Chemical mapping of a 207-nucleotide RNA with DMS and 2A3. For 2A3 the reverse transcriptase was SuperScript II with manganese. The data come from the RNA Mapping Database (RMDB), library M2RFPK. The 2A3 profile rests on 3,057 reads. The DMS profile rests on 1,625 reads.
RNA sequence: GGGAACGACUCGAGUAGAGUCGAAAAACGCGGAGUGCGCUCCGCGACAACACUUCUUUCGACCCGCUAACCGAGACCUAUGGGUCGUUAAAUUACGUCUCUAUCUUACUCACAUAACAUCGCACAAAAAACGUGGUUCGGUUCGCCGAACCACGAAGUUGGUUAAUGAGUUCGCUCAUUAACCAACAAAAGAAACAACAACAACAAC
Reactivity to DMS in 0.01 (KOAc 150mM, MgCl2 10mM, bicine 150mM(pH8.5), 24C), signal-to-noise 1, nucleotides 027 to 156: a080c030g020c050g000g010a070g020u010g000c300g130c000u000c030c020g040c070g010a110c030a050a200c070a070c020u000u000c140u000u000u010c010g000a020c010c000c030g050c140u000a080a100c070c100g000a110g000a080c020c060u000a140u000g020g000g050u010c030g080u000u010a010a080a120u000u000a080c070g000u000c000u010c030u020a110u000c090u040u000a040c000u000c060a050c040a130u020a100a030c130a080u000c070g000c020a100c080a000a030a060a030a150a180c010g060u030g020g020u000u000c000g020g020u000u010c300g030c000c000g000a030a010c000c000a000c080g000a000a000
Reactivity to 2A3 in 0.01 (KOAc 150mM, MgCl2 10mM, bicine 150mM(pH8.5), 24C), signal-to-noise 5, nucleotides 027 to 156: a000c020g000c010g010g000a040g010u020g020c090g030c090u010c000c000g010c010g030a020c010a080a010c030a030c030u130u130c020u070u300u170c020g000a010c020c000c000g030c180u200a010a000c050c040g010a010g020a030c000c010u050a080u230g010g000g000u020c000g040u010u020a010a030a030u150u040a010c020g010u000c000u000c000u030a110u060c060u070u150a110c030u110c090a070c030a120u230a210a040c040a150u150c070g040c090a070c120a030a070a040a070a060a030c030g000u000g000g000u000u000c010g000g030u020u040c100g030c050c000g000a000a010c000c000a000c000g000a000a010